[RMDB]
RNA sequence: GGGAACGACUCGAGUAGAGUCGAAAAUGUCUCUCCUGAAGGAGGAAGGAGCUCUCGAACGCUCUCCCGACCGCUCGGAUGGGCCGCUUCCGGCAAGAGGGGCCGAAAGUGUGAAGGGAGAGACCGCAAGGUGCAGUCUUCGGACUGCACAAAAGAAACAACAACAACAAC
Reactivity to DMS in 0.01 (KOAc 150mM, MgCl2 10mM, bicine 150mM(pH8.5), 24C), signal-to-noise 6, nucleotides 027 to 129: u000g000u020c040u000c020u040c030c020u010g000a180a060g010g020a130g000g000a120a070g010g000a040g000c030u020c080u000c160g000a150a150c040g030c000u020c020u020c040c010c000g030a160c080c020g020c000u020c050g040g020a140u070g070g000g000c030c000g000c030u000u010c000c020g020g010c100a060a060g020a110g020g000g000g010c040c020g000a080a040a000g040u030g030u030g000a130a200g010g000g000a050g000a030g020a010c030c040g000c100a010a040g060
Reactivity to 2A3 in 0.01 (KOAc 150mM, MgCl2 10mM, bicine 150mM(pH8.5), 24C), signal-to-noise 8, nucleotides 027 to 129: u200g020u000c000u000c000u000c020c020u050g040a050a030g010g010a010g010g010a020a090g070g020a010g010c010u010c010u030c070g090a090a030c070g000c010u020c000u020c000c000c000g090a170c020c000g050c020u030c030g270g140a250u260g160g000g020c010c010g050c040u040u000c010c000g010g010c000a070a030g080a050g120g080g110g010c000c000g040a040a020a020g030u050g020u060g070a080a040g000g000g000a010g000a000g000a010c000c010g070c060a060a070g110